RNA sequence: GGGAACGACUCGAGUAGAGUCGAAAAAAAGAUAUGGAGGGAAGGGAGUCUUAACACACGAAGAACAAUUAUCGGAAACGAUAAUUGGGAGUGUGGGAGGACAUCGAUCUUCCCUCCUAAGUCAAAAUCUAUGUCCUUCGUUCGCGAAGGACAUAGAAAAAGAAACAACAACAACAAC
Reactivity to DMS in 0.01 (KOAc 150mM, MgCl2 10mM, bicine 150mM(pH8.5), 24C), signal-to-noise 1, nucleotides 027 to 126: a070a140a130g000a020u000a300u030g010g000a000g010g010g000a050a000g000g000g020a030g000u000c000u000u000a120a140c000a000c000a010c000g000a080a140g030a130a130c000a000a000u000u000a010u000c010g000g000a090a040a120c000g080a000u000a000a000u030u000g040g000g000a100g000u000g080u010g000g000g000a110g030g020a010c100a200u010c200g010a070u010c000u000u000c050c000c000u000c000c000u000a000a080g000u000c020a070a060a070a110